[RMDB]
RNA sequence: GGGAACGACUCGAGUAGAGUCGAAAAGAUAUGGACCUUCACGGCUAGCUGCCAUUCGGAAACGAAUGGACAGCUUGGACCCGUGAGGUCCUAAGUCAAAAGGGAUUAUACUUCGGUAUAAUCCCAACCCUCUUAACUGCUUCGGCAGUUAAGAGGGAAAAGAAACAACAACAACAAC
Reactivity to DMS in 0.01 (KOAc 150mM, MgCl2 10mM, bicine 150mM(pH8.5), 24C), signal-to-noise 1, nucleotides 027 to 126: g000a000u000a100u000g000g000a000c000c000u010u000c000a010c010g000g000c010u000a000g020c000u010g000c000c000a010u010u000c000g010g000a050a000a030c000g000a020a000u000g000g000a080c000a000g020c010u010u000g040g000a060c300c000c010g000u000g040a000g000g040u000c000c000u000a000a050g000u000c010a050a100a120a090g010g020g000a000u000u000a010u000a000c010u000u020c280g050g010u000a000u000a000a000u000c000c000c000a000a000